An RNA of 207 nucleotides, treated with 2A3 and DMS and read out base by base. It was measured as part of the RMDB library OK3TST.
RNA sequence: GGGAACGACUCGAGUAGAGUCGAAAAGCGUAUCGGAAACGGUAUGCGGCACGCGAAAGCGUGCAAGGGCGCCUUCCACAGCAGGGCGGGAAAAACGCGGCGCCGUCAGCCUAUGAAAGCAUGGAAACAUGAGCAUGGGCAGACAACCUGCGUGGCGAGAUAUGUAUCUGUUCGCAGAUACAUAUCUAAAAGAAACAACAACAACAAC
Reactivity to 2A3 in 0.01 (KOAc 150mM, MgCl2 10mM, bicine 150mM(pH8.5), 24C), signal-to-noise 2, nucleotides 027 to 156: g020c000g000u010a000u010c000g010g030a080a020a030c010g000g000u000a000u010g000c010g030g030c000a000c000g010c000g040a120a030a040g000c010g010u010g010c020a010a040g020g000g000c000g000c000c000u090u070c000c010a010c020a010g000c000a000g000g000g020c010g000g000g020a020a050a000a000a000c000g000c000g010g000c010g000c000c000g000u000c000a010g000c000c000u020a010u000g060a170a090a020g090c000a000u000g000g000a050a050a030c000a000u000g000a020g180c000a000u000g000g000g000c010a010g000a000c000a000a010c000c010u000g000c010g000u000g010g010c040g030
Reactivity to DMS in 0.01 (KOAc 150mM, MgCl2 10mM, bicine 150mM(pH8.5), 24C), signal-to-noise 2, nucleotides 027 to 156: g030c030g010u000a000u030c010g010g000a210a080a250c020g040g000u000a020u000g000c010g020g010c010a000c010g030c000g000a160a150a230g030c010g020u000g030c020a020a030g020g010g030c010g030c000c020u010u000c020c040a090c040a110g000c070a040g010g000g000c010g020g000g000a040a060a030a090a030c020g000c050g010g020c010g050c010c030g000u000c030a080g020c020c000u000a010u000g000a100a070a180g020c000a020u000g000g000a300a090a280c030a020u000g000a100g000c000a010u000g030g000g020c010a050g010a010c030a040a030c000c020u000g020c020g030u000g020g040c150g000